[RMDB]
Structure probing data (2A3 and DMS) for a 177-nucleotide construct. Values cover nucleotides 27 to 126. It was measured as part of the RMDB library OK2TRN. The reactions ran in a buffer of 150 mM KOAc, 10 mM MgCl2 and 150 mM bicine (pH 8.5), at 24 C. In probing experiments dimethyl sulfate is read out at A N1 and C N3, which are open when not base-paired. 2A3 adducts were read by reverse transcription with SuperScript II with manganese. The DMS profile rests on 1,360 reads.
RNA sequence: GGGAACGACUCGAGUAGAGUCGAAAAGCUGCUGUGAGAUUUGGUCUCAGGAAGGUCCCUCUUCAACACAUGGCCUACUUUCCAGGGGUAGGGAACACAACGGGGUCAGGGAGGACGGCAGGGCACACCCUUCUGAAUGGUUCGCCAUUCAGAAGGGAAAAGAAACAACAACAACAAC
Reactivity to 2A3 in 0.01 (KOAc 150mM, MgCl2 10mM, bicine 150mM(pH8.5), 24C), signal-to-noise 1, nucleotides 027 to 126: g070c000u040g010c010u060g030u050g100a060g020a090u110u160u110g110g060u010c000u010c040a050g100g030a060a010g070g010u070c020c040c000u000c040u060u070c010a100a090c020a000c030a240u090g050g000c000c010u080a080c030u140u050u040c010c030a030g040g010g000g060u140a070g050g020g030a050a070c070a000c010a060a150c070g000g020g000g020u050c030a030g070g040g010a030g080g040a020c000g010g000c040a030g010g050g000c020a020c000a010
Reactivity to DMS in 0.01 (KOAc 150mM, MgCl2 10mM, bicine 150mM(pH8.5), 24C), signal-to-noise 2, nucleotides 027 to 126: g000c020u000g000c020u020g010u000g000a060g020a120u010u000u010g020g000u000c000u010c070a170g000g030a060a110g010g010u010c050c030c030u000c050u000u010c050a090a080c170a100c130a080u020g000g000c030c030u010a070c100u020u000u000c060c060a090g000g030g010g000u000a050g010g000g020a130a110c180a040c210a050a090c070g000g000g030g020u010c110a090g000g000g010a120g000g010a050c080g010g000c070a000g010g010g050c050a090c220a230